[RMDB]
RNA sequence: GGGAACGACUCGAGUAGAGUCGAAAAACUAGGGGCAAAGCGGUACUCGUUGGGCAACAGGUAAGGCGUGGUACUCAGGUCGGUGGUUUCGCGAUCGGUCUCCAGCAGGACGCGGUGGUCCAUCAGGACAUAGAGUACGGUUCGCCGUACUCUAUGUAAAAGAAACAACAACAACAAC
Reactivity to DMS in 0.01 (KOAc 150mM, MgCl2 10mM, bicine 150mM(pH8.5), 24C), signal-to-noise 8, nucleotides 027 to 126: a100c070u020a070g010g010g000g020c060a050a100a080g020c060g000g010u020a060c070u010c070g020u000u020g010g010g010c080a070a100c100a060g010g000u020a060a090g010g000c040g010u010g000g010u010a040c090u020c070a090g000g020u010c040g010g010u010g010g000u000u010u020c070g000c050g000a050u000c030g020g000u000c030u020c030c030a050g000c090a090g000g000a080c060g010c040g000g010u010g010g010u010c030c020a070u020c100a110g010g010
Reactivity to 2A3 in 0.01 (KOAc 150mM, MgCl2 10mM, bicine 150mM(pH8.5), 24C), signal-to-noise 9, nucleotides 027 to 126: a000c080u100a060g000g010g030g000c040a060a070a040g050c050g040g020u080a060c040u040c070g070u050u060g050g030g010c050a100a030c030a100g060g060u130a080a030g050g000c050g030u060g010g020u060a060c030u040c070a030g020g030u030c020g020g040u050g020g050u010u040u080c060g010c040g040a060u050c020g020g020u020c030u010c020c010a020g010c010a020g020g050a020c020g000c020g070g040u070g030g010u010c020c010a060u090c040a030g060g070
The record gives the reactivity of an RNA of 177 nucleotides to DMS and 2A3. High DMS reactivity at an A or C suggests that its Watson-Crick edge is free. The 2A3 profile rests on 21,259 reads. Values cover nucleotides 27 to 126.